[RMDB]
Description:
Chemical mapping of a 177-nucleotide RNA with 2A3. 2A3 adducts were read by reverse transcription with SuperScript II with manganese.
RNA sequence: GGGAACGACUCGAGUAGAGUCGAAAAGAAAGAAAGAAAGAACCUCAUGGCAGUGUUCUGGAAUCCUACGUGAGGGACAAUCAUUCAGACCCACGUAGCAGUGUUCUGGAAUUCUGUGUGAGGGAAAAUGACGUGCGGUAUUCGUACCGCACGUCAUAAAAGAAACAACAACAACAAC
Reactivity to 2A3 in 0.01 (KOAc 150mM, MgCl2 10mM, bicine 150mM(pH8.5), 24C), signal-to-noise 2, nucleotides 027 to 126: g140a000a110a000g060a050a030a000g140a010a180a000g040a070a090c000c000u000c010a000u010g300g000c010a000g000u000g000u030u000c000u010g000g020a010a000u000c000c000u000a000c000g000u000g060a300g040g000g000a060c030a000a210u250c070a110u130u120c150a020g030a160c000c000c000a000c000g010u010a000g010c100a070g010u120g070u030u040c000u000g000g010a000a000u010u000c000u010g000u000g000u000g020a000g050g020g000a000a050a000
It was measured as part of the RMDB library RFM100.
The reactions ran in a buffer of 150 mM KOAc, 10 mM MgCl2 and 150 mM bicine (pH 8.5), at 24 C.
Values cover nucleotides 27 to 126.